Structure probing data (2A3 and DMS) for a 177-nucleotide construct.
The reactions ran in a buffer of 150 mM KOAc, 10 mM MgCl2 and 150 mM bicine (pH 8.5), at 24 C.
The DMS profile rests on 2,404 reads.
Source: RMDB library OK2TST, as collected in RNAgym.
RNA sequence: GGGAACGACUCGAGUAGAGUCGAAAAACUCAGUGCUCCUGGAACUUUCCGAACUAGAGACUGGGACUUAUAGGAGCCUUCUAGAGGAAACUGUCGUGUUUUCACAGGUGUCUUCUAUUUGUGGCAAAUAUUUUAAGUCUUUCGAGACUUAAAAUAUAAAAGAAACAACAACAACAAC
Reactivity to 2A3 in 0.01 (KOAc 150mM, MgCl2 10mM, bicine 150mM(pH8.5), 24C), signal-to-noise 2, nucleotides 027 to 126: a000c010u010c000a000g030u000g240c000u030c010c030u110g090g050a090a100c020u110u250u030c090c040g020a040a040c040u050a070g000a020g010a090c030u040g010g020g000a050c000u090u080a030u020a150g080g000a000g010c020c000u120u100c020u040a090g000a020g040g000a010a020a020c020u050g220u210c070g050u090g110u180u130u130u200c030a020c010a020g030g030u040g040u020c000u040u000c000u010a020u030u050u110g070u020g050g000c010a080a150
Reactivity to DMS in 0.01 (KOAc 150mM, MgCl2 10mM, bicine 150mM(pH8.5), 24C), signal-to-noise 3, nucleotides 027 to 126: a150c010u000c020a040g020u000g010c030u000c050c070u000g010g020a090a210c120u020u010u000c110c060g010a090a160c080u010a080g000a050g010a070c040u010g010g000g010a150c070u000u000a090u020a040g010g000a100g020c000c020u000u000c040u000a070g030a060g000g000a020a040a020c000u000g010u000c160g020u000g010u000u000u010u020c010a030c010a060g000g010u000g000u000c010u000u000c000u000a010u000u000u000g020u010g010g020c110a100a080